The data come from the RNA Mapping Database (RMDB), library M2RFPK.
The record gives the reactivity of an RNA of 207 nucleotides to DMS and 2A3.
The 2A3 profile rests on 4,640 reads.
RNA sequence: GGGAACGACUCGAGUAGAGUCGAAAAUACCGUCUUCUCCCCGACGGUUUCAAUCCAUAGCUUCACGUUGUGUAGUGUAGGUGGAAGGUAUCGUGUGGUGUAUAAACACCACAUAGUCUCUUAGGGGUCAAGCUGAUAAACUUCGGUUUAUCAGCAAAGCAACUACUAGUUUCGACUAGUAGUUGCUAAAAGAAACAACAACAACAAC
Reactivity to DMS in 0.01 (KOAc 150mM, MgCl2 10mM, bicine 150mM(pH8.5), 24C), signal-to-noise 2, nucleotides 027 to 156: u000a020c010c010g020u000c010u000u010c010u000c010c010c010c090g000a030c010g010g010u000u010u000c070a180a150u000c010c030a050u000a140g010c020u000u000c020a060c050g020u000u000g020u000g030u000a070g020u000g010u000a080g040g000u000g000g020a060a080g030g020u000a070u000c070g030u000g030u000g010g030u020g020u010a160u000a110a110a140c000a010c000c010a020c000a000u000a030g010u000c040u000c030u000u000a160g020g000g000g030u000c030a070a210g020c000u000g020a000u000a010a010a000c000u010u010c300g050g000u000u000u000a010u000c010a020g020c000a010a000
Reactivity to 2A3 in 0.01 (KOAc 150mM, MgCl2 10mM, bicine 150mM(pH8.5), 24C), signal-to-noise 6, nucleotides 027 to 156: u060a000c000c000g020u000c010u250u070c040u060c010c000c000c010g010a000c010g000g000u020u010u070c030a030a050u010c020c000a060u050a110g090c020u050u060c010a040c070g300u300u210g090u180g050u250a100g000u010g050u120a050g020g030u020g020g010a030a020g080g030u100a060u180c050g000u010g010u010g040g000u010g030u030a060u080a290a290a010c000a000c000c000a000c000a000u000a010g000u000c010u000c010u100u170a020g000g010g010g010u040c080a060a040g000c000u000g010a000u010a000a010a000c000u020u060c160g040g010u000u000u000a000u000c000a000g000c000a000a010